[RMDB]
RNA sequence: GGGAACGACUCGAGUAGAGUCGAAAAACGCCCUCGACCUAUUCUCAAACUUUAAAUAGGUAGGACGGCACGGCUGCUCCGGUGAGCCGUGCCAUGGAAUCGGGAGCUCCAAGUGGGCCAUUUUUGGUACUUAAUUUCUUUUCGAAGAAAUUAAGUAAAAAGAAACAACAACAACAAC
Reactivity to DMS in 0.01 (KOAc 150mM, MgCl2 10mM, bicine 150mM(pH8.5), 24C), signal-to-noise 6, nucleotides 027 to 126: a130c200g000c010c010c000u010c040g000a040c000c000u010a020u010u020c110u030c170a100a110a140c150u030u020u020a070a060a060u010a010g000g020u010a040g000g010a100c130g000g020c000a020c010g000g010c010u000g020c030u010c140c090g000g010u010g000a030g010c000c000g010u000g000c000c010a010u020g000g000a100a120u010c070g000g010g000a080g010c050u010c040c030a090a130g010u020g000g000g010c010c080a030u010u000u000u010u000g010g010
Reactivity to 2A3 in 0.01 (KOAc 150mM, MgCl2 10mM, bicine 150mM(pH8.5), 24C), signal-to-noise 9, nucleotides 027 to 126: a000c040g040c000c000c000u010c010g070a040c010c010u020a020u110u080c110u040c110a150a180a160c070u140u200u300a070a100a060u050a030g030g020u020a020g070g050a040c070g000g000c000a000c000g000g000c000u040g010c010u030c060c090g100g020u120g160a000g000c000c000g000u000g000c000c000a000u020g010g030a030a040u090c040g010g050g020a040g010c010u000c020c010a090a100g050u300g030g000g000c030c030a080u070u080u040u100u170g100g020